[RMDB]
RNA sequence: GGGAACGACUCGAGUAGAGUCGAAAAUAAAAGAGUGCUCGAGCAUGCGAAGGUGAGAGCAGUCCUGAGCAUGCGAACAGGACAGAGUGCUCAAUGGAAACUACUCGAAUCCCGCGACUCAAAAAAACACCAUUCAAUACUUCGGUAUUGAAUGGUGAAAAGAAACAACAACAACAAC
Reactivity to DMS in 0.01 (KOAc 150mM, MgCl2 10mM, bicine 150mM(pH8.5), 24C), signal-to-noise 1, nucleotides 027 to 126: u020a170a060a060a090g000a000g020u000g010c020u000c020g010a170g000c060a030u000g000c000g010a200a070g000g010u010g000a060g000a160g020c080a080g000u010c000c000u000g000a300g000c010a000u000g000c020g020a110a120c230a090g010g000a120c160a130g000a000g030u000g010c000u000c000a080a080u000g060g000a110a030a110c060u000a000c000u000c010g000a060a090u000c050c040c020g000c100g010a090c030u060c040a000a050a100a100a040a090a160
Reactivity to 2A3 in 0.01 (KOAc 150mM, MgCl2 10mM, bicine 150mM(pH8.5), 24C), signal-to-noise 1, nucleotides 027 to 126: u120a010a070a010a000g010a010g000u020g040c010u000c010g030a030g000c000a000u000g000c000g000a030a000g040g010u060g040a210g030a030g130c080a010g100u040c000c000u030g000a000g000c010a000u000g020c020g020a110a000c050a050g050g170a030c060a040g010a000g000u020g020c000u000c000a000a040u050g020g020a030a090a020c010u010a000c000u000c010g000a020a030u040c020c050c020g010c050g060a070c040u000c130a060a160a040a050a000a020a040